The record gives the reactivity of an RNA of 177 nucleotides to 2A3 and DMS. As a SHAPE reagent, 2A3 marks flexible, mostly unpaired nucleotides at the ribose 2'-OH. The DMS profile rests on 2,617 reads.
[RMDB]
RNA sequence: GGGAACGACUCGAGUAGAGUCGAAAACGUGCUGUCACGUUCUCGGUACCCUCGAUUUCCGUCUCUUCUUGCAUGCGUAUCCAACCGCCUCGCGGCUCCGCCGACCCCCAUGGACCGCGCUGCGGCACUACCGAUUAUGGUUCGCCAUAAUCGGUAGAAAAGAAACAACAACAACAAC
Reactivity to 2A3 in 0.01 (KOAc 150mM, MgCl2 10mM, bicine 150mM(pH8.5), 24C), signal-to-noise 3, nucleotides 027 to 126: c020g020u030g030c160u230g250u300c020a010c030g020u060u030c030u030c000g000g030u070a070c010c000c000u030c020g110a110u050u080u000c040c010g050u010c010u000c000u080u000c030u040u070g030c040a080u100g040c040g070u090a110u050c040c010a020a060c010c000g000c000c010u000c000g000c010g040g020c070u000c000c010g040c020c000g100a120c010c010c000c000c000a000u010g020g010a020c000c000g020c010g000c030u020g000c000g000g000c010a030
Reactivity to DMS in 0.01 (KOAc 150mM, MgCl2 10mM, bicine 150mM(pH8.5), 24C), signal-to-noise 3, nucleotides 027 to 126: c030g030u000g010c270u010g010u000c040a040c020g000u000u000c060u010c040g020g000u000a080c080c060c000u000c030g000a090u000u000u000c040c040g000u010c030u000c010u000u000c010u000u000g010c090a040u000g010c090g000u010a050u010c040c050a140a230c040c010g010c010c040u000c030g020c020g000g010c160u000c000c020g030c100c080g000a300c020c000c000c000c020a140u010g010g000a080c000c010g010c030g000c080u000g000c000g000g030c150a110
Values are in units of 0.01, from 0 to 300, in steps of 10.
The reactions ran in a buffer of 150 mM KOAc, 10 mM MgCl2 and 150 mM bicine (pH 8.5), at 24 C.
The 2A3 profile rests on 3,802 reads.